The record gives the reactivity of an RNA of 207 nucleotides to 2A3 and DMS. It was measured as part of the RMDB library M2RFPK.

RNA sequence: GGGAACGACUCGAGUAGAGUCGAAAAAGAUCCACGCUACGGCGUGGAUCACACGUUCAGCCCUAUUGGGACGGAAGUAGGCAUAGUGCCGAAGGAACGCAUUAGUCAUGCGCUACGGCGCAUGACACACAUCAGAGUCACUUCGGUGACUCUGAAACUUAUUAUGCAUGUUCGCAUGCAUAAUAAGAAAAGAAACAACAACAACAAC
Reactivity to 2A3 in 0.01 (KOAc 150mM, MgCl2 10mM, bicine 150mM(pH8.5), 24C), signal-to-noise 7, nucleotides 027 to 156: a000g010a000u000c000c000a000c000g010c010u030a020c270g130g000c000g000u000g000g000a000u000c000a000c000a000c010g010u020u010c020a030g040c000c000c000u140a260u130u300g020g010g020a050c040g080g080a060a020g020u030a020g010g000c040a080u120a220g160u190g130c020c000g000a010a010g130g030a020a000c020g020c090a110u080u200a030g010u000c000a000u010g000c000g000c010u020a030c250g080g000c000g000c000a000u000g000a000c000a000c010a000c000a060u030c000a000g000a000g000u010c000a000c000u050u110c180g070g000u000g000a000c000u000c000u000g000a000a000a000
Reactivity to DMS in 0.01 (KOAc 150mM, MgCl2 10mM, bicine 150mM(pH8.5), 24C), signal-to-noise 3, nucleotides 027 to 156: a070g000a020u010c010c010a050c030g040c010u000a090c260g090g000c010g010u010g010g020a010u000c010a040c020a040c030g030u000u000c010a130g000c020c000c000u010a170u000u000g020g040g010a170c010g000g010a100a120g010u000a130g010g000c030a210u000a150g030u000g000c000c000g010a110a130g030g010a070a050c070g020c050a120u010u000a110g030u000c050a040u000g010c000g020c010u000a090c210g050g000c000g040c010a010u000g010a010c020a030c100a050c100a100u000c000a030g010a040g000u000c000a000c040u000u010c290g040g030u010g010a000c000u000c000u000g000a000a050a070